[RMDB]
RNA sequence: GGGAACGACUCGAGUAGAGUCGAAAAUGGGCUGCUGCAGUUGAUGAAGCGUUCCCUCUCGAUGAAGCAGAAGAUGUUACUGAAUCUGUGCAAGAAGAAGCACAACCAGUAGAAGUACCUGUUGAAGCACCGCGCAUCUUCGGAUGCGCGAAAAGAAACAACAACAACAAC
Reactivity to 2A3 in 0.01 (KOAc 150mM, MgCl2 10mM, bicine 150mM(pH8.5), 24C), signal-to-noise 2, nucleotides 027 to 129: u080g010g080g010c000u110g000c000u000g020c050a060g000u070u040g130a230u110g000a060a000g000c000g000u000u000c000c000c030u000c020u000c000g130a110u050g070a050a010g020c020a000g020a010a000g000a040u070g030u190u060a060c040u000g050a040a030u020c050u000g040u080g000c040a080a040g120a160a060g080a090a000g120c030a000c010a020a000c000c000a000g010u000a010g020a040a000g010u000a010c040c000u090g000u010u000g000a030a030g060c060a020c080
Reactivity to DMS in 0.01 (KOAc 150mM, MgCl2 10mM, bicine 150mM(pH8.5), 24C), signal-to-noise 4, nucleotides 027 to 129: u000g000g050g030c040u000g010c010u000g030c040a070g030u010u030g040a090u040g020a140a110g050c040g000u020u010c010c060c050u000c020u070c040g020a100u030g030a130a030g040c050a020g030a080a070g000a120u000g010u060u000a010c030u000g050a090a140u000c000u040g030u020g060c000a000a240g040a110a170g070a160a090g020c060a000c040a050a170c070c020a060g000u060a020g040a100a050g040u020a080c030c000u010g010u040u000g000a090a080g000c040a030c150
Source: RMDB library 15KLIB, as collected in RNAgym. Chemical mapping of a 170-nucleotide RNA with 2A3 and DMS. Values cover nucleotides 27 to 129. The DMS profile rests on 7,405 reads. DMS adducts were read by reverse transcription with MarathonRT.